[RMDB]
RNA sequence: GGGAACGACUCGAGUAGAGUCGAAAAACAGAAGGGUGAAAGUUCAAGUAAGCUAGCCGGCAAAAAAGCAAACUUGACCACCAAGGAUAAAAGAGAUCUUAUCCAAGGAUGCAAAAGAUAAUCUCACAAAAGCUUCAUUCGUUCGCGAAUGAAGCAACACGAUACAGUUGUUCGCAACUGUAUCGUGAAAAGAAACAACAACAACAAC
Reactivity to DMS in 0.01 (KOAc 150mM, MgCl2 10mM, bicine 150mM(pH8.5), 24C), signal-to-noise 1, nucleotides 027 to 156: a110c000a080g000a140a080g060g020g000u000g000a100a180a030g000u000u000c040a040a090g000u030a070a290g020c000u000a200g040c010c010g000g000c020a000a040a070a140a140a030g000c000a080a110a000c020u000u000g000a130c060c000a090c040c000a020a280g000g040a030u020a000a000a040a140g000a200g000a080u000c020u020u000a000u000c000c010a020a290g000g000a100u000g000c020a060a080a090a050g020a120u010a070a040u000c020u000c020a090c070a080a020a070a190g020c000u000u020c000a040u000u000c000g070u000u000c300g050c030g010a020a000u000g010a000a000g000c000a010a040
Reactivity to 2A3 in 0.01 (KOAc 150mM, MgCl2 10mM, bicine 150mM(pH8.5), 24C), signal-to-noise 5, nucleotides 027 to 156: a000c050a020g100a100a100g080g020g000u050g050a180a070a040g030u110u020c000a000a010g000u010a120a000g010c010u030a020g020c020c050g090g000c090a090a100a050a020a020a020g030c050a070a050a020c030u020u020g010a010c010c010a010c010c010a020a020g030g010a010u020a050a060a040a010g050a000g000a020u020c010u040u040a000u010c020c020a020a030g050g010a040u090g020c050a020a070a050a040g020a010u090a120a080u080c040u020c060a050c060a070a130a010a030g000c000u000u010c000a000u010u000c000g010u020u080c200g000c000g130a000a000u000g000a000a000g000c000a000a000